The record gives the reactivity of an RNA of 207 nucleotides to DMS and 2A3. The reactions ran in a buffer of 150 mM KOAc, 10 mM MgCl2 and 150 mM bicine (pH 8.5), at 24 C. For 2A3, 9,097 sequencing reads were counted.
[RMDB]
RNA sequence: GGGAACGACUCGAGUAGAGUCGAAAAACACGGUGGUCUGCAUCCACCCAGCCAUCAGCAUGGCUCACUGCAUUGCACAGAGACGUGGUUAUGUUUAAUGUCUUCCUGAAGAAUAGCCAAAGUACUCUAAAAUAGCACUGGGCCAGGCAUGGUGGCACAUAAUCAUCCUCUUCGGAGGAUGAUUAUGAAAAGAAACAACAACAACAAC
Reactivity to DMS in 0.01 (KOAc 150mM, MgCl2 10mM, bicine 150mM(pH8.5), 24C), signal-to-noise 3, nucleotides 027 to 156: a090c050a080c080g000g050u000g020g010u000c070u010g030c090a220u000c000c010a010c010c020c070a080g020c020c010a020u000c010a060g020c030a070u010g000g010c000u000c010a040c030u000g020c020a180u000u000g020c160a210c170a080g010a030g020a090c010g010u000g020g020u000u000a060u000g010u000u000u000a090a130u020g010u000c090u000u010c140c090u000g020a120a120g010a070a070u000a030g030c010c010a030a040a090g020u000a070c010u010c020u010a050a070a030a080u000a150g040c010a010c010u000g000g010g000c000c010a030g010g020c000a080u010g010g030u000g000g030c030a050
Reactivity to 2A3 in 0.01 (KOAc 150mM, MgCl2 10mM, bicine 150mM(pH8.5), 24C), signal-to-noise 8, nucleotides 027 to 156: a010c080a010c050g010g000u020g000g050u080c190u300g050c070a070u030c010c000a000c010c010c010a020g000c000c000a000u010c000a000g000c010a010u010g000g000c000u010c000a000c010u010g000c010a060u040u100g060c140a110c030a090g000a010g010a010c020g050u030g010g010u030u010a020u050g150u060u280u190a200a120u200g100u040c070u160u090c070c070u100g060a030a010g030a080a030u020a010g000c000c010a020a120a120g030u170a300c000u000c000u030a040a100a040a040u080a040g010c000a000c010u000g000g000g000c010c000a000g000g000c020a030u010g000g020u000g000g000c000a000